[RMDB]
RNA sequence: GGGAACGACUCGAGUAGAGUCGAAAAAUUAAAAGGUGGCAGCUUCUUGAUUAUCAUUGGUUCUUGCUGAGGAAUGUAUUCUAAUUAGGCCAGUUACCAACACAUAAGAUUCGAUGUUUAUAAAAUGAUGAUACGUAACCUUCGGGUUACGUAUCAUAAAAGAAACAACAACAACAAC
Reactivity to 2A3 in 0.01 (KOAc 150mM, MgCl2 10mM, bicine 150mM(pH8.5), 24C), signal-to-noise 2, nucleotides 027 to 126: a010u120u050a000a040a000a050g060g000u030g000g090c000a000g050c000u240u080c040u110u030g070a090u020u100a060u280c010a110u010u050g000g000u070u020c020u010u150g050c070u020g010a060g020g010a020a000u050g020u190a110u100u040c010u000a190a260u090u030a040g010g000c000c000a000g030u020u010a010c000c000a130a000c100a000c020a070u040a120a050g030a060u100u170c060g070a040u020g010u070u190u040a300u110a040a140a000a070u210g040
Reactivity to DMS in 0.01 (KOAc 150mM, MgCl2 10mM, bicine 150mM(pH8.5), 24C), signal-to-noise 2, nucleotides 027 to 126: a030u010u020a050a050a110a070g000g030u000g000g010c030a170g020c000u000u010c040u000u000g000a120u010u020a030u010c090a110u020u010g020g000u010u020c020u000u000g050c020u010g000a120g010g000a020a030u000g010u000a030u000u050c040u000a080a100u000u010a130g000g010c050c040a020g020u040u010a050c040c020a030a030c180a050c090a080u010a070a070g000a090u010u000c070g020a090u000g030u000u000u000a050u000a070a110a030a090u010g000